[RMDB]
RNA sequence: GGGAACGACUCGAGUAGAGUCGAAAAUCUGUAGGAUUAUGGCUGAACGCCUCUAAGUCAGAAUCCAUGCUGGAAUAGACGAUAAUCACCUUUCCCGAUGUGCCGCGAAUAGCGAUAGGUGUCUUCUAGCCAUACCAUUCUUCGGAAUGGUAUGGCUAAAAGAAACAACAACAACAAC
Reactivity to 2A3 in 0.01 (KOAc 150mM, MgCl2 10mM, bicine 150mM(pH8.5), 24C), signal-to-noise 1, nucleotides 027 to 126: u050c090u050g070u100a070g110g000a000u000u040a000u080g030g000c000u000g070a120a040c070g040c000c040u100c000u020a000a000g050u030c000a000g000a060a020u020c000c030a070u070g000c020u070g050g170a100a100u070a060g140a030c060g000a000u050a160a090u190c060a060c040c000u000u020u000c010c000c000g000a110u120g090u080g120c080c010g020c030g020a140a050u040a080g010c050g030a010u040a030g060g000u000g000u000c010u000u030c030u000